The data come from the RNA Mapping Database (RMDB), library OK1LIB. The record gives the reactivity of an RNA of 177 nucleotides to 2A3. 2A3 adducts were read by reverse transcription with SuperScript II with manganese.
RNA sequence: GGGAACGACUCGAGUAGAGUCGAAAAGAUUUGGGCGCGGCUGGUGCGGGCACUUGGCGUAGUCGACGAAGCGGACCUGCGGCCGCUGCGAGAGGCCGCUGCUCAGGGUCGCCAGGCGUAUACCGAGGCCCCUUCGUCAAUUCGUUGACGAAGGGGCAAAAGAAACAACAACAACAAC
Reactivity to 2A3 in 0.01 (KOAc 150mM, MgCl2 10mM, bicine 150mM(pH8.5), 24C), signal-to-noise 1, nucleotides 027 to 126: g300a030u170u210u180g090g010g030c050g000c000g130g020c010u030g020g060u140g100c090g000g000g000c080a040c050u080u140g000g000c010g050u050a070g090u060c030g020a100c030g050a090a000g030c030g000g100a070c030c010u090g000c060g020g090c060c040g000c030u100g010c000g000a150g000a030g040g010c000c000g000c060u060g000c000u030c060a030g030g000g010u050c020g000c030c040a000g000g060c000g000u020a050u030a070c010c010g010a040g000